[RMDB]
RNA sequence: GGGAACGACUCGAGUAGAGUCGAAAAAAAAAAAAGAUAUGGACGCACUCACACGAAGAACUAUAUCGGAUCGGAAACGAUCCGAGUAUAGGGAGUGUACGCGAGUGCGUCCUAAGUCAAAAAAAAACAUUACCUAAAGGUUCGCCUUUAGGUAAUGAAAAGAAACAACAACAACAAC
Reactivity to DMS in 0.01 (KOAc 150mM, MgCl2 10mM, bicine 150mM(pH8.5), 24C), signal-to-noise 2, nucleotides 027 to 126: a010a000a000a010a070a070a240a100g020a030u020a300u020g000g010a020c000g000c020a010c000u010c000a080c020a020c030g000a160a040g000a130a200c020u000a020u010a010u000c010g000g000a010u000c000g010g010a070a080a190c010g010a010u000c000c000g010a000g010u000a000u000a010g000g000g000a170g000u000g010u000a060c170g010c140g000a040g010u000g030c000g020u000c010c010u000a010a080g000u030c020a010a000a000a000a040a040a090a090a130
Reactivity to 2A3 in 0.01 (KOAc 150mM, MgCl2 10mM, bicine 150mM(pH8.5), 24C), signal-to-noise 1, nucleotides 027 to 126: a000a000a010a000a000a000a090a060g060a030u090a000u130g000g010a010c010g000c010a000c010u040c000a020c000a000c080g230a300a060g020a070a060c020u020a020u010a010u050c000g020g020a010u010c000g030g020a060a050a070c010g000a000u010c000c030g000a000g010u030a010u010a000g000g050g010a070g030u090g060u120a090c170g100c050g140a020g010u000g030c000g000u000c010c000u020a010a000g030u000c010a000a000a000a000a000a000a040a040a080